[RMDB]
RNA sequence: GGGAACGACUCGAGUAGAGUCGAAAAGAAAAUGAGUGCCUCACACUCUGAGGGAAAACAAAAUCUCACGAUAGGUGAGCUAUCUAAAACAAAAUGCACUGUACGAGUGCCGUACUAAAGAAAGAAAGGGAUACAUAGAGUUCGCUCUAUGUAUCCCAAAAGAAACAACAACAACAAC
Reactivity to DMS in 0.01 (KOAc 150mM, MgCl2 10mM, bicine 150mM(pH8.5), 24C), signal-to-noise 3, nucleotides 027 to 126: g000a050a090a150a090u010g000a050g000u000g000c140c000u010c040a040c050a060c080u000c020u010g010a050g020g000g000a070a060a060a080c180a090a070a070a090u030c040u030c000a040c070g010a080u050a100g040g010u020g010a040g020c080u040a090u020c030u000a030a060a070a100c190a030a080a180a070u020g010c030a040c000u010g000u050a060c120g000a100g000u000g010c040c100g020u000a020c080u000a040a060a100g020a040a060a140g020a100a080a100
Reactivity to 2A3 in 0.01 (KOAc 150mM, MgCl2 10mM, bicine 150mM(pH8.5), 24C), signal-to-noise 2, nucleotides 027 to 126: g050a000a180a000a040u260g010a010g030u000g000c010c000u050c000a010c000a050c110u020c010u000g000a040g000g000g000a000a160a020a000c120a000a020a040a070u020c000u000c000a070c080g090a150u170a050g230g030u000g030a000g000c000u090a120u040c000u010a000a040a040a040c010a020a060a060a070u210g030c050a000c020u140g020u300a030c040g070a030g070u040g080c010c000g020u010a000c000u100a020a070a110g110a020a120a020g100a070a030a010
An RNA of 177 nucleotides, treated with DMS and 2A3 and read out base by base. Reactivities are given for positions 27 through 126. For 2A3 the reverse transcriptase was SuperScript II with manganese.